[RMDB]
RNA sequence: GGGAACGACUCGAGUAGAGUCGAAAACGCUGGGCUUUGGGAGAUCGAUGUACGAUGAGGACAUGCAGCUGAAGCGCGCACGGCUGCAACAGCCUCAUCGUACGCGAUCGAAGAACAAAGCCUGUGCUGAAGCGCGCACGGCAACCGAAAGGUGCGACGUGCAUGCUGCGUUCGCGCAGCAUGCACGAAAAGAAACAACAACAACAAC
Reactivity to 2A3 in 0.01 (KOAc 150mM, MgCl2 10mM, bicine 150mM(pH8.5), 24C), signal-to-noise 1, nucleotides 027 to 156: c030g020c060u050g010g000g000c020u000u050u050g040g050g000a100g010a010u000c010g170a250u130g000u000a030c000g010a000u000g000a000g070g000a090c090a210u170g000c060a000g000c000u030g010a250a050g040c020g000c030g040c060a010c050g000g030c000u040g050c030a020a060c120a120g000c000c020u000c000a010u050c000g000u000a000c000g010c000g010a020u000c020g010a010a000g020a000a090c010a000a010a010g000c000c000u000g030u020g000c010u120g040a090a110g000c010g000c000g000c020a000c000g050g030c050a060a150c010c060g070a070a010a090g000g030u060g020c000g010a060